[RMDB]
RNA sequence: GGGAACGACUCGAGUAGAGUCGAAAACAACAAUACCGCCAUUACCGCCACCGAUACGAGCUAGCAUUUAUCAACUCCGUUAGAAAAAGUAUCACGUACAUUAACAAGGACAUUGAGAAUACGUUUACACAAAACACCAUUUCGAUGGUGUUUUGUGAAAAGAAACAACAACAACAAC
Reactivity to DMS in 0.01 (KOAc 150mM, MgCl2 10mM, bicine 150mM(pH8.5), 24C), signal-to-noise 3, nucleotides 027 to 126: c050a190a080c170a080a080u050a010c010c040g010c030c020a040u040u000a060c010c040g010c070c000a010c010c000g020a070u000a120c120g000a100g010c060u010a100g000c030a070u000u020u000a120u000c050a030a070c250u030c060c050g020u000u000a100g000a010a020a020a080a040g020u020a110u040c100a080c050g030u000a030c140a040u020u010a040a060c090a030a110g010g000a070c130a050u030u010g010a060g020a090a090u000a070c100g000u000u010u000a080
Reactivity to 2A3 in 0.01 (KOAc 150mM, MgCl2 10mM, bicine 150mM(pH8.5), 24C), signal-to-noise 5, nucleotides 027 to 126: c040a000a000c050a030a050u050a150c000c010g020c030c030a010u080u120a030c020c000g020c000c020a030c030c040g010a010u030a050c040g020a010g010c010u010a000g030c040a030u030u130u110a170u100c030a030a020c020u020c030c000g030u040u040a060g110a030a060a020a010a000g060u060a020u110c050a020c060g020u080a010c040a090u150u110a110a040c040a070a050g080g050a010c060a060u070u120g060a070g070a150a020u090a070c090g000u000u020u060a010

Description: Chemical mapping of a 177-nucleotide RNA with DMS and 2A3. For DMS the reverse transcriptase was MarathonRT. For DMS, 3,484 sequencing reads were counted.